[RMDB]
RNA sequence: GGGAACGACUCGAGUAGAGUCGAAAAGAUAUGGAAUCACAGGAGCUAUAAUCGUACUGGGUCGGAAACGACCUUACGGUAGCUUAGUGAUUCCUAAGUCAAAACGAUUACCGUUCGCGGUAAUCGAGGCUAACACUUAGUUCGCUAAGUGUUAGCCAAAAGAAACAACAACAACAAC
Reactivity to 2A3 in 0.01 (KOAc 150mM, MgCl2 10mM, bicine 150mM(pH8.5), 24C), signal-to-noise 3, nucleotides 027 to 126: g000a010u010a000u060g000g010a000a000u010c000a000c030a070g300g130a010g000c010u060a070u090a300a050u060c000g000u010a020c160u110g020g000g000u000c000g000g020a010a010a000c010g000a000c030c000u000u000a000c000g030g060u030a020g000c000u010u020a030g010u010g000a000u000u000c000c000u000a000a010g000u000c030a010a050a130a100c000g000a000u020u010a010c020c000g020u040u090c300g010c010g150g020u000a000a000u000c000g000a100
Reactivity to DMS in 0.01 (KOAc 150mM, MgCl2 10mM, bicine 150mM(pH8.5), 24C), signal-to-noise 3, nucleotides 027 to 126: g020a000u000a090u020g010g000a010a010u000c010a000c000a270g000g020a020g020c030u000a300u000a130a030u020c010g030u010a010c300u010g000g010g040u000c010g020g020a000a030a050c000g020a010c000c000u000u000a010c000g000g020u000a010g070c000u000u000a060g020u010g000a020u000u000c000c000u010a000a080g000u000c030a090a070a120a210c040g010a010u000u000a000c010c000g020u010u020c260g020c020g000g000u010a000a000u000c000g000a070